[RMDB]
RNA sequence: GGGAACGACUCGAGUAGAGUCGAAAACCGAAGCCCCAUUGAGGGAUAAUACAGGCUCUCCCAUCCAACUGCUAUUCCAACACGUCCUCGUCGUACAGAGUGGUAACAUGUGUCACCACAUAUCCAACAUAGUGUCGCAUCUUCGGAUGCGACACAACAAUAUAGUUCCGUUCGCGGAACUAUAUUGAAAAGAAACAACAACAACAAC
Reactivity to 2A3 in 0.01 (KOAc 150mM, MgCl2 10mM, bicine 150mM(pH8.5), 24C), signal-to-noise 3, nucleotides 027 to 156: c000c000g030a110a040g070c000c000c000c000a110u030u110g040a180g010g010g000a010u080a080a020u130a120c110a050g040g020c010u000c000u030c030c010c000a030u060c050c030a070a050c040u070g020c010u050a100u090u110c040c030a060a030c030a040c070g070u040c000c020u030c030g070u020c010g010u050a040c010a020g080a050g080u030g010g020u030a060a020c020a080u190g100u070g030u130c030a020c070c000a010c020a050u120a090u090c040c010a000a060c020a140u100a080g000u000g000u000c000g010c010a000u000c000u040u030c070g050g010a000u000g010c000g010a000c000a000c000a000a000
Reactivity to DMS in 0.01 (KOAc 150mM, MgCl2 10mM, bicine 150mM(pH8.5), 24C), signal-to-noise 2, nucleotides 027 to 156: c030c010g000a130a190g040c020c000c010c000a300u010u000g020a140g040g010g000a060u000a050a130u010a100c080a120g000g020c010u000c050u020c010c030c010a130u010c060c030a110a080c060u000g010c020u000a080u000u020c040c040a030a090c070a060c020g010u010c010c030u000c040g000u000c080g020u000a140c050a160g010a160g030u000g000g010u010a020a040c020a190u000g030u010g000u020c020a030c010c000a030c010a090u000a150u000c060c020a020a100c070a090u000a130g010u000g000u000c010g090c000a010u000c000u000u010c300g000g010a000u010g000c000g020a010c000a000c000a010a130